[RMDB]
The data come from the RNA Mapping Database (RMDB), library OK2TST. Chemical mapping of a 177-nucleotide RNA with DMS and 2A3. For DMS the reverse transcriptase was MarathonRT. The DMS profile rests on 1,529 reads. The reactions ran in a buffer of 150 mM KOAc, 10 mM MgCl2 and 150 mM bicine (pH 8.5), at 24 C.

RNA sequence: GGGAACGACUCGAGUAGAGUCGAAAAUGGUCCGGGUUUUAGCGCACAGACACCGCUUCUCGGCUGGUCCAUGACGAAAUCCGUCAUGGCGACCCUUAUCGGUAUGCGCAUCGCGGAAGGGCGGAUAGCGUAGGGACCUAUUCGUAGGUCCCUACGCAAAAGAAACAACAACAACAAC
Reactivity to DMS in 0.01 (KOAc 150mM, MgCl2 10mM, bicine 150mM(pH8.5), 24C), signal-to-noise 2, nucleotides 027 to 126: u010g030g010u000c000c030g000g000g000u010u010u010u000a110g000c020g010c020a120c250a100g020a170c190a060c030c020g020c120u000u000c030u000c160g000g000c010u000g000g000u000c010c020a010u000g000a000c000g000a170a180a150u000c200c000g020u010c000a000u020g000g000c050g010a040c010c000c050u000u020a040u010c050g000g020u000a090u010g010c040g020c010a050u000c060g020c070g000g000a040a100g010g000g000c150g000g010a050u020a120
Reactivity to 2A3 in 0.01 (KOAc 150mM, MgCl2 10mM, bicine 150mM(pH8.5), 24C), signal-to-noise 2, nucleotides 027 to 126: u120g030g030u090c020c020g040g070g000u060u040u110u200a020g000c000g000c040a030c010a110g240a030c030a070c100c020g010c030u140u100c030u040c020g040g030c050u100g040g040u020c000c000a000u000g010a010c010g060a170a050a080u130c080c010g010u010c010a010u020g010g030c000g080a050c000c010c000u000u070a110u030c010g020g000u040a040u110g040c040g000c040a040u030c060g000c030g170g000a060a050g100g010g000c080g000g030a110u110a040